[RMDB]
RNA sequence: GGGAACGACUCGAGUAGAGUCGAAAAAAAGAUAUGGAGAACACUACCCACCUUGGGAAUGUGCGACGACGGCUUAUCGGAAACGAUAAGCCAUCAGCACACCCAAGAGGUGUUCUCCUAAGUCAAAUCAUAUAGAUAGGUUCGCCUAUCUAUAUGAAAAAGAAACAACAACAACAAC
Reactivity to 2A3 in 0.01 (KOAc 150mM, MgCl2 10mM, bicine 150mM(pH8.5), 24C), signal-to-noise 6, nucleotides 027 to 126: a000a010a040g170a060u230a110u160g000g000a000g000a000a010c010a020c010u180a170c030c060c030a070c090c010u010u010g020g000g030a300a300u140g200u010g010c050g080a140c120g000a000c040g100g000c000u000u000a000u000c000g030g000a040a040a020c010g000a000u000a000a010g000c000c010a000u010c000a000g000c000a000c010a000c000c010c000a000a000g000a000g000g000u000g010u000u000c000u000c000c000u000a020a010g060u060c050a040a030a260
Reactivity to DMS in 0.01 (KOAc 150mM, MgCl2 10mM, bicine 150mM(pH8.5), 24C), signal-to-noise 7, nucleotides 027 to 126: a060a080a150g010a080u010a120u010g010g000a020g010a010a000c010a000c010u000a130c050c030c120a300c080c000u000u000g010g000g000a060a080u000g020u000g010c000g020a070c280g010a000c030g010g010c000u000u000a000u000c000g000g000a070a050a090c000g010a010u000a010a000g010c000c000a000u000c000a060g000c000a010c000a070c000c000c000a010a000g000a050g020g000u000g000u000u000c000u000c000c000u000a000a070g010u000c060a070a110a180
An RNA of 177 nucleotides, treated with 2A3 and DMS and read out base by base. Reactivities are given for positions 27 through 126. Conditions: 150 mM KOAc, 10 mM MgCl2 and 150 mM bicine (pH 8.5), 24 C. For DMS, 11,269 sequencing reads were counted.